[RMDB]
Structure probing data (2A3) for a 207-nucleotide construct. 2A3 is a SHAPE reagent: it acylates the 2'-hydroxyl of flexible nucleotides of all four kinds. 2A3 adducts were read by reverse transcription with SuperScript II with manganese. The data come from the RNA Mapping Database (RMDB), library M2RFPK.
RNA sequence: GGGAACGACUCGAGUAGAGUCGAAAACAGAGCUGAUGGGGCAUGUACCUAUCCAAAAUGAGAUCCCAUCUUGCACACUGUGCUAAUUUGAGAUUCUCAUGCCUCCUACUUGGAGAGAUCUGGACUACUAACUGUAUGACGUUCGCGUCAUACAGAAGGCAUCAACGUUCUUCGGAACGUUGAUGCCAAAAGAAACAACAACAACAAC
Reactivity to 2A3 in 0.01 (KOAc 150mM, MgCl2 10mM, bicine 150mM(pH8.5), 24C), signal-to-noise 1, nucleotides 027 to 156: c000a020g030a000g020c050u030g010a010u000g000g040g000g000c060a070u200g070u070a100c000c000u000a020u020c000c010a040a050a000a140u040g010a000g000a010u000c000c000c000a020u010c030u000u000g000c000a020c040a120c250u300g020u010g000c020u180a010a070u060u000u010g030a050g000a010u300u020c000u010c010a010u010g020c020c020u000c000c010u120a230c040u230u270g000g000a000g000a010g000a010u000c000u020g000g010a020c060u070a000c010u040a170a170c000u030g000u000a000u000g010a000c000g000u060u080c200g020c040g160u030c000a000u010a000c000a000g000a000a000